Overview: The data come from the RNA Mapping Database (RMDB), library OK2TST. Chemical mapping of a 177-nucleotide RNA with 2A3 and DMS. For DMS, 1,700 sequencing reads were counted.
RNA sequence: GGGAACGACUCGAGUAGAGUCGAAAACUGUGCAUGCACGUAUACAUCCGUAUGGCACCUCGUUAACAAUACAUAAUUUCCUACCCUUUCGACGCAUGCAACGGAAGCACAUGGAUGUCUACAGAGGCGAUGGCUAAAUCUUCGGAUUUAGCCAUCGAAAAGAAACAACAACAACAAC
Reactivity to 2A3 in 0.01 (KOAc 150mM, MgCl2 10mM, bicine 150mM(pH8.5), 24C), signal-to-noise 2, nucleotides 027 to 126: c030u050g020u040g000c010a010u010g000c030a010c130g030u050a020u020a050c010a030u000c010c030g050u050a080u040g010g020c020a030c050c040u100c050g080u030u110a170a050c050a160a070u090a120c050a080u180a070a130u090u060u040c020c010u030a080c000c030c000u000u110u110c090g050a040c040g010c010a000u040g000c000a030a020c040g000g030a100a110g040c040a050c000a110u040g000g050a010u010g000u010c010u010a030c020a040g110a080g090g000
Reactivity to DMS in 0.01 (KOAc 150mM, MgCl2 10mM, bicine 150mM(pH8.5), 24C), signal-to-noise 3, nucleotides 027 to 126: c050u010g030u010g000c010a050u010g010c030a120c150g040u000a040u010a040c030a040u010c010c000g000u020a090u000g010g020c020a130c080c050u010c120g030u000u010a080a160c130a080a060u010a120c120a080u010a070a070u000u000u000c000c000u000a110c080c110c030u010u010u000c110g030a120c090g000c010a040u010g010c000a060a100c030g010g020a040a040g000c060a040c090a030u010g000g020a030u000g010u000c050u020a040c020a130g020a150g010g000
The 2A3 profile rests on 2,013 reads. For 2A3 the reverse transcriptase was SuperScript II with manganese.